RNA sequence: GGGAACGACUCGAGUAGAGUCGAAAAUCAGAAUCAGGCCGGAGUGUUUAGCGCUCCGUAAACACGGUCGUACAUCCAGCCGGUAGCCGGGUUCCUUGCAUUGAGUGAUGUACGGAGUUUAUAGAGCAAAAGAAAGACCUGUUCGCAGGUCUUUCAAGCUCAGUAUCUAGUUCGCUAGAUACUGAGCAAAAGAAACAACAACAACAAC
Reactivity to 2A3 in 0.01 (KOAc 150mM, MgCl2 10mM, bicine 150mM(pH8.5), 24C), signal-to-noise 2, nucleotides 027 to 156: u050c000a010g070a030a050u030c030a030g030g030c020c010g030g010a050g020u040g080u100u170u280a110g060c040g000c030u000c010c000g000u030a010a010a000c130a020c080g030g060u060c010g010u030a000c000a020u000c020c020a010g040c030c010g040g000u050a030g040c010c020g000g010g000u060u000c020c000u060u130g000c030a080u070u140g040a030g040u190g010a020u020g000u020a030c010g040g000a080g010u080u150u040a140u130a080g080a010g030c050a060a080a020a080g010a000a000a000g000a000c000c000u010g000u030u010c120g000c090a010g000g000u000c000u000u000u000c000a010a000
Reactivity to DMS in 0.01 (KOAc 150mM, MgCl2 10mM, bicine 150mM(pH8.5), 24C), signal-to-noise 1, nucleotides 027 to 156: u000c080a090g010a070a040u010c010a010g030g060c050c040g040g040a090g070u010g000u000u010u000a190g000c100g020c030u050c020c000g010u000a010a020a040c060a170c050g030g030u000c040g000u000a020c010a050u000c010c020a300g040c010c020g060g000u000a070g030c030c050g030g020g010u010u000c010c050u000u010g000c080a130u000u000g020a170g000u010g020a110u000g020u000a030c030g020g020a120g020u000u000u030a090u000a050g010a180g030c060a100a030a130a160g000a010a030a060g000a000c000c000u000g000u010u000c300g020c030a010g000g000u000c000u000u010u010c000a040a120
Structure probing data (2A3 and DMS) for a 207-nucleotide construct. Source: RMDB library M2RFOK, as collected in RNAgym. The 2A3 profile rests on 1,479 reads. The RNA was probed in 150 mM KOAc, 10 mM MgCl2 and 150 mM bicine (pH 8.5) at 24 C.